[RMDB]
RNA sequence: GGGAACGACUCGAGUAGAGUCGAAAACUUAUCCGGUUUUAACGCUGAUUUAUUGGCGCAAAGGUUUACGGAUAAACAACUAAUAAUUAAACCUUUUGUGUGCGAAACGUGGUUGUUUAACGUACUCACUGCCCCCAGGGAUUCGUCCCUGGGGGAAGGACUUGUUACUGUUCGCAGUAACAAGUCCAAAAGAAACAACAACAACAAC
Reactivity to 2A3 in 0.01 (KOAc 150mM, MgCl2 10mM, bicine 150mM(pH8.5), 24C), signal-to-noise 3, nucleotides 027 to 156: c010u020u000a010u010c000c000g000g030u000u020u010u040a040a030c020g010c010u030g100a130u080u140u280a190u090u300g010g010c000g000c030a020a010a010g010g000u000u000u000a000c000g010g000a000u000a070a110a010c040a030a020c020u190a060a110u160a240a010u120u150a020a020a000c010c000u010u060u120u130g050u010g000u000g010c080g040a140a020a010c030g020u050g030g020u050u030g030u030u050u080a030a020c010g000u010a020c030u010c080a060c050u090g010c010c000c010c010c000a000g000g010g000a010u040u020c150g020u000c050c000c000u000g000g010g010g000g000a000a000